[RMDB]
RNA sequence: GGGAACGACUCGAGUAGAGUCGAAAAAUAAUGCAGAGCCAAAUUGUCUCCUUUUACUUCAAACUUUUUAAAAACUUUAAAGAUGACCAGAGCAUCCAAAAGAGUGUGGAGACCAUCAAGGAAGACAGUUAGGAAUGGAAUUCGUUCCAUUCCUAACAAAAGAAACAACAACAACAAC
Reactivity to DMS in 0.01 (KOAc 150mM, MgCl2 10mM, bicine 150mM(pH8.5), 24C), signal-to-noise 2, nucleotides 027 to 126: a070u010a070a080u000g010c130a090g000a150g030c040c040a050a070a120u000u000g010u000c010u000c010c000u000u000u010u000a110c040u000u010c010a030a060a090c030u010u000u020u010u040a020a070a040a130a160c060u000u010u000a060a070a170g000a050u000g010a060c040c180a150g030a100g020c010a030u000c030c030a060a020a030a060g000a010g020u000g000u000g000g000a010g000a070c150c140a060u010c190a000a010g000g010a050a040g000a020c060a080
Reactivity to 2A3 in 0.01 (KOAc 150mM, MgCl2 10mM, bicine 150mM(pH8.5), 24C), signal-to-noise 2, nucleotides 027 to 126: a000u110a010a070u100g060c050a000g030a050g150c020c010a020a090a060u130u060g000u000c000u020c010c000u040u050u050u110a070c020u050u020c020a080a080a090c010u080u040u060u110u210a100a160a030a050a100c020u120u200u150a100a190a000g000a020u010g020a020c000c070a060g080a040g060c010a010u000c020c020a050a010a050a120g040a030g010u050g020u030g030g030a030g000a120c040c000a050u040c020a010a020g050g000a020a020g050a020c010a020